[RMDB]
RNA sequence: GGGAACGACUCGAGUAGAGUCGAAAAAUAAAUAGAUACAAGGCCAAAGUAUCAAAAUAAGAUACAACCGGAAAGUAUCAAAAUCAAAGCACAGACACGAAAGGCCAAACGUGUCUGUGCUAAAAAACAAUAUAGUUCGUUUCGACGAACUAUAUUGAAAAGAAACAACAACAACAAC
Reactivity to DMS in 0.01 (KOAc 150mM, MgCl2 10mM, bicine 150mM(pH8.5), 24C), signal-to-noise 2, nucleotides 027 to 126: a050u030a060a080a100u000a100g000a030u000a000c000a060a210g000g010c010c010a090a150a160g000u010a010u010c020a060a140a140a150u010a100a080g000a020u000a000c040a050a140c130c060g030g030a070a050a060g000u000a000u000c000a100a050a120a110u000c200a080a030a030g040c000a010c030a000g000a010c000a000c000g010a080a110a100g020g000c030c070a020a070a070c040g000u000g000u000c010u000g000u010g050c010u000a000a010a050a070a010a020
Reactivity to 2A3 in 0.01 (KOAc 150mM, MgCl2 10mM, bicine 150mM(pH8.5), 24C), signal-to-noise 1, nucleotides 027 to 126: a000u140a000a080a000u160a050g040a000u020a020c010a020a030g010g000c010c000a000a130a000g030u000a000u040c020a070a030a040a190u080a040a040g000a000u020a010c010a060a010c050c030g050g030a110a060a030g020u000a000u040c060a010a000a020a040u190c030a120a140a000g000c000a000c000a010g000a000c000a000c010g020a090a010a010g040g000c020c010a070a130a000c000g000u000g000u010c000u000g000u000g020c000u000a000a000a000a000a000a000
Record summary
An RNA of 177 nucleotides, treated with DMS and 2A3 and read out base by base. Reactivities are given for positions 27 through 126. The reactions ran in a buffer of 150 mM KOAc, 10 mM MgCl2 and 150 mM bicine (pH 8.5), at 24 C. The 2A3 profile rests on 1,518 reads. For 2A3 the reverse transcriptase was SuperScript II with manganese.